[RMDB]
RNA sequence: GGGAACGACUCGAGUAGAGUCGAAAAGAUAUGGAUGAUUUAAGGGAGCUGUGUGUCGGAAACGACACAAUCAGCAUCGAUCUUACGGAUCAUCCUAAGUCAAAACGCUAACCUUCGGGUUAGCGAAUCGAUAGUGCAUCUUCGGAUGCACUAUCGAAAAAGAAACAACAACAACAAC
Reactivity to 2A3 in 0.01 (KOAc 150mM, MgCl2 10mM, bicine 150mM(pH8.5), 24C), signal-to-noise 1, nucleotides 027 to 126: g030a000u010a000u020g010g000a000u010g010a010u000u070u120a040a050g030g000g000a020g000c000u010g020u000g000u000g000u030c000g000g000a030a020a000c000g000a000c000a010c000a030a070u300c010a010g040c010a010u300c020g010a020u010c010u050u010a050c260g150g070a010u000c000a010u000c000c000u000a030a000g010u000c000a000a000a160a180c060g000c000u000a000a000c000c000u070u090c300g140g000g010u010u010a000g000c010g000a010a080
Reactivity to DMS in 0.01 (KOAc 150mM, MgCl2 10mM, bicine 150mM(pH8.5), 24C), signal-to-noise 2, nucleotides 027 to 126: g010a030u000a060u010g000g000a020u010g000a000u020u000u000a010a020g010g000g030a040g070c000u000g010u020g000u010g010u000c010g030g010a000a000a040c000g010a000c000a000c000a020a060u080c050a000g050c000a300u000c240g000a040u020c010u000u000a040c300g000g000a020u000c000a020u000c030c000u010a010a140g000u000c000a090a060a070a300c020g010c000u000a000a010c000c000u000u050c270g030g010g010u000u000a000g010c000g020a020a010